[RMDB]
RNA sequence: GGGAACGACUCGAGUAGAGUCGAAAAUCAUAUCUCGAUCGUAUCCGCUCACACUACGGAAUCGUAGAUGGCGAGACGAUACGAUGGGAACUAUUUUCCACAAUGGGAAAUGGGUUCACAUUUGAGCUAGAGUCCAUGAUAUUCUGGGCAAUAGUCACCCUUAAUAUCUGUUCGCAGAUAUUAAGGGAAAAGAAACAACAACAACAAC
Reactivity to DMS in 0.01 (KOAc 150mM, MgCl2 10mM, bicine 150mM(pH8.5), 24C), signal-to-noise 3, nucleotides 027 to 156: u000c050a090u000a080u000c010u000c010g010a100u000c010g000u000a050u000c030c070g020c000u000c010a010c010a150c000u000a020c010g020g010a120a110u000c030g030u000a010g010a090u000g020g000c080g000a020g020a120c060g010a060u000a020c000g010a090u000g010g010g020a010a040c020u000a030u000u000u010u000c000c000a110c110a190a220u000g010g000g000a010a020a000u000g010g020g000u000u000c010a070c030a150u000u000u000g000a170g010c030u000a020g000a300g010u000c010c010a040u010g000a120u000a150u010u000c080u000g000g010g000c010a030a150u000a030g010u000c060a160
Reactivity to 2A3 in 0.01 (KOAc 150mM, MgCl2 10mM, bicine 150mM(pH8.5), 24C), signal-to-noise 9, nucleotides 027 to 156: u140c030a030u070a100u130c020u020c030g100a020u000c000g010u000a010u010c040c080g000c000u010c000a000c010a000c000u010a000c010g150g170a280a280u300c020g030u000a000g020a300u000g020g000c160g000a010g010a030c000g000a000u000a010c000g000a000u020g000g020g000a010a010c000u010a010u010u010u000u000c010c000a060c130a210a290u280g010g010g010a010a010a010u040g060g020g020u080u070c060a050c030a170u110u100u200g080a040g020c010u010a010g000a010g020u000c010c020a050u150g080a070u150a110u300u110c060u030g000g000g000c000a020a050u010a010g030u040c040a080